[RMDB]
Structure probing data (DMS and 2A3) for a 207-nucleotide construct.
RNA sequence: GGGAACGACUCGAGUAGAGUCGAAAACGCGCUCGCCGAGUUGUGGUGCCUGAACCUGAGGAAGAUGGGGAUGAAUCUAAUCAGGAGGACAAUCAGUCUGAAAAUCAUUCUGAUGAUGAAAUUGAUGAUGAUCAAGUUGAUCCACCCGCGGCCGGGGGUAAUAUCCAGUAUUCGUACUGGAUAUUACAAAAGAAACAACAACAACAAC
Reactivity to DMS in 0.01 (KOAc 150mM, MgCl2 10mM, bicine 150mM(pH8.5), 24C), signal-to-noise 2, nucleotides 027 to 156: c080g040c100g040c020u000c030g000c020c040g000a080g020u000u000g000u000g020g040u000g000c010c020u010g020a110a080c070c020u010g010a070g010g010a070a090g010a110u010g020g020g010g000a090u000g010a100a060u010c040u000a160a130u000c030a050g030g010a060g000g010a070c050a070a140u010c040a130g000u000c060u000g020a060a060a160a100u000c010a090u000u000c060u000g010a090u000g020a180u000g000a050a050a060u000u010g010a120u000g000a070u000g000a110u010c040a050a100g000u010u000g010a080u010c020c000a100c000c010c030g000c030g020g040c030c040g050g000g020g030
Reactivity to 2A3 in 0.01 (KOAc 150mM, MgCl2 10mM, bicine 150mM(pH8.5), 24C), signal-to-noise 4, nucleotides 027 to 156: c050g040c030g030c000u030c010g010c010c010g010a010g020u030u080g040u110g040g030u060g070c000c000u020g040a070a050c000c010u030g010a030g050g020a020a050g010a030u070g030g010g050g030a020u100g070a060a080u050c030u070a030a040u040c020a000g010g030a010g010g060a010c020a020a090u060c010a030g070u000c000u030g060a080a060a030a080u100c010a030u090u030c050u060g050a050u020g010a040u060g050a070a080a110u130u090g020a040u030g010a020u030g010a000u080c050a090a050g020u030u040g080a030u010c030c020a020c000c020c000g030c040g040g010c040c020g000g000g000g020
The reactions ran in a buffer of 150 mM KOAc, 10 mM MgCl2 and 150 mM bicine (pH 8.5), at 24 C. Source: RMDB library OK3TST, as collected in RNAgym. The 2A3 profile rests on 3,738 reads.